[RMDB]
Chemical mapping of a 177-nucleotide RNA with 2A3 and DMS. For DMS the reverse transcriptase was MarathonRT. Values cover nucleotides 27 to 126. The reactions ran in a buffer of 150 mM KOAc, 10 mM MgCl2 and 150 mM bicine (pH 8.5), at 24 C.
RNA sequence: GGGAACGACUCGAGUAGAGUCGAAAAUCAACGCCGAAGGACUGGCUCUCAUCCAGUGGAUGCAUUGAGUGAAUUGAUUGUCAGGGCUGUCUCUAGGUUUAAUCCCAGACCUCUCUGUGCUUAGGGCCAGCCCAACGGAAUUCGUUCCGUUGGGCUGAAAAGAAACAACAACAACAAC
Reactivity to 2A3 in 0.01 (KOAc 150mM, MgCl2 10mM, bicine 150mM(pH8.5), 24C), signal-to-noise 2, nucleotides 027 to 126: u080c050a020a040c090g000c030c030g070a010a040g130g030a000c040u090g060g000c000u010c020u020c020a030u010c020c000a060g080u030g180g090a080u090g000c020a050u020u160g020a050g030u150g080a270a110u140u130g080a030u020u180g020u120c060a010g090g000g000c000u000g010u000c010u010c000u010a010g000g000u000u020u090a030a010u030c040c000c000a000g040a070c010c030u000c010u000c000u000g060u010g060c010u050u060a060g060g000g020c000
Reactivity to DMS in 0.01 (KOAc 150mM, MgCl2 10mM, bicine 150mM(pH8.5), 24C), signal-to-noise 2, nucleotides 027 to 126: u000c100a060a140c300g000c040c030g050a130a250g030g000a040c020u020g000g000c050u000c010u000c040a000u000c030c020a030g050u010g010g010a070u000g000c050a050u000u010g000a030g010u090g020a110a160u000u000g000a090u020u010g000u010c050a070g020g000g090c000u000g000u000c000u000c060u000a140g000g000u010u040u040a090a110u010c010c010c020a190g000a050c030c030u010c050u000c020u000g020u020g000c070u020u000a010g030g010g010c120